[RMDB]
RNA sequence: GGGAACGACUCGAGUAGAGUCGAAAACAUUGGCAUUUCGAUGCCAAUGGGUCUGCGUCGCGCGGCCGCCGAGUCGUUCCCGCGCCCGCGUGACGCAGUUUGGGCAGCUCGAGUUCGCUCGAGCUAAUUGGCUGAGGUUAUUCGUAACCUCAGCCAAAAAAGAAACAACAACAACAAC
Reactivity to DMS in 0.01 (KOAc 150mM, MgCl2 10mM, bicine 150mM(pH8.5), 24C), signal-to-noise 1, nucleotides 027 to 126: c000a020u000u000g000g010c010a040u000u000u000c200g010a060u000g010c010c000a000a000u000g000g000g000u000c010u010g000c000g010u010c010g010c000g000c000g020g020c130c000g020c020c110g000a070g030u010c010g020u010u000c000c000c000g010c000g000c300c000c010g040c030g000u000g010a000c010g030c000a010g010u000u000u010g000g010g030c230a130g000c000u000c000g010a040g020u000u020c200g000c000u020c010g010a020g010c010u000a000a040